[RMDB]
RNA sequence: GGGAACGACUCGAGUAGAGUCGAAAAACGUGUGAGAGUACGUGUUCGUGAACUCUCACACUCACGAUCGUUCGAGAGAGAGUGUACACGUGUGAUCGAUCUCACGAGUGUGUACGUUCUCGAGUACACACUCACUCGUACACGAGAUCGAGAGAGACCUAAACACCUGCUUCGGCAGGUGUUUAGGAAAAGAAACAACAACAACAAC
Reactivity to 2A3 in 0.01 (KOAc 150mM, MgCl2 10mM, bicine 150mM(pH8.5), 24C), signal-to-noise 2, nucleotides 027 to 156: a010c070g000u060g000u000g000a030g040a010g020u110a000c050g020u090g160u250u260c060g020u070g130a050a030c000u000c000u020c000a000c000a000c000u000c000a060c020g050a150u080c020g000u060u020c000g000a000g000a000g010a000g000a060g130u170g060u180a060c070a020c160g030u100g010u050g070a100u050c010g030a020u020c010u000c030a020c070g010a000g010u010g010u000g000u000a000c000g000u050u000c050u000c000g010a010g020u000a000c010a000c000a010c000u000c000a000c010u060c040g170u190a050c020a000c090g010a020g000a010u000c040g000a000g000a000g000a000g030a020
Description:
Chemical mapping of a 207-nucleotide RNA with 2A3. It was measured as part of the RMDB library OK3TST.